[RMDB]
RNA sequence: GGGAACGACUCGAGUAGAGUCGAAAAUACAUACAUGGGAAAGCGGUUGAAAGCAUAAAAGUGAACGUAGGGAGAAUGGAGUAUAAUUCUGUUCUCUAUGUGGCUUUUGGGAAGUUAGAUUGCCUUUUGAAGCCUUAGUCUUUUCACGUGUAAAAGACGUGCUAAUGACGUUCGCGUCAUUAGCACGAAAAGAAACAACAACAACAAC
Reactivity to 2A3 in 0.01 (KOAc 150mM, MgCl2 10mM, bicine 150mM(pH8.5), 24C), signal-to-noise 2, nucleotides 027 to 156: u130a000c010a010u090a020c000a050u060g000g000g000a000a010a060g020c020g010g040u110u020g170a080a030a000g000c000a020u070a090a060a000a000g040u040g060a160a020c030g010u020a040g090g100g020a060g030a030a030u040g000g000a000g030u090a090u080a300a050u130u000c000u040g020u010u000c010u000c000u010a040u070g030u010g010g000c010u000u100u050u110g050g000g040a130a030g050u070u020a060g010a190u030u140g080c020c000u110u040u060u110g080a050a020g000c010c080u040u030a030g020u060c050u000u010u000u000c140a130c130g020u060g020u080a060a090a030a010g060a010